Conditions: 150 mM KOAc, 10 mM MgCl2 and 150 mM bicine (pH 8.5), 24 C. This 177-nucleotide RNA was probed chemically with 2A3 and DMS. The data come from the RNA Mapping Database (RMDB), libraries RFM100 and RFMREP.

RNA sequence: GGGAACGACUCGAGUAGAGUCGAAAAACGGCUGGUGAGGUACGCCUCACCAGCCGACAUAAUCAACGAGAGUGUCAACCUGCCGCGAAGGUCUAUGAGUGGUCUGUUGCUUCUCUUUGUGGAGCAACGAUAGGACGACUUUCGAGUCGUCCUAUCGAAAAGAAACAACAACAACAAC
Reactivity to 2A3 in 0.01 (KOAc 150mM, MgCl2 10mM, bicine 150mM(pH8.5), 24C), signal-to-noise 2, nucleotides 027 to 126: a000c010g020g000c000u040g000g030u000g000a010g060g020u080a070c270g080c040c000u000c010a000c010c000a010g020c000c010g010a010c020a000u070a010a070u070c010a010a060c050g010a020g020a000g130u080g070u100c010a010a030c010c000u040g010c020c000g010c020g060a080a070g120g060u060c120u190a160u110g060a040g030u030g010g020u060c080u040g010u000u000g000c000u050u020c010u000c000u050u050u100g060u020g030g070a060g030c030a100a050
Reactivity to DMS in 0.01 (KOAc 150mM, MgCl2 10mM, bicine 150mM(pH8.5), 24C), signal-to-noise 2, nucleotides 027 to 126: a120c050g000g020c000u010g020g060u000g030a010g020g030u000a080c290g000c010c020u020c000a010c030c030a000g020c000c010g010a020c100a020u050a020a150u000c070a050a060c080g000a040g000a120g000u000g000u010c000a050a070c040c050u000g020c000c050g000c090g010a120a120g000g000u000c130u000a070u000g000a240g040u010g000g020u000c050u010g020u000u000g000c030u000u010c000u000c140u010u000u040g020u000g000g000a030g000c060a030a040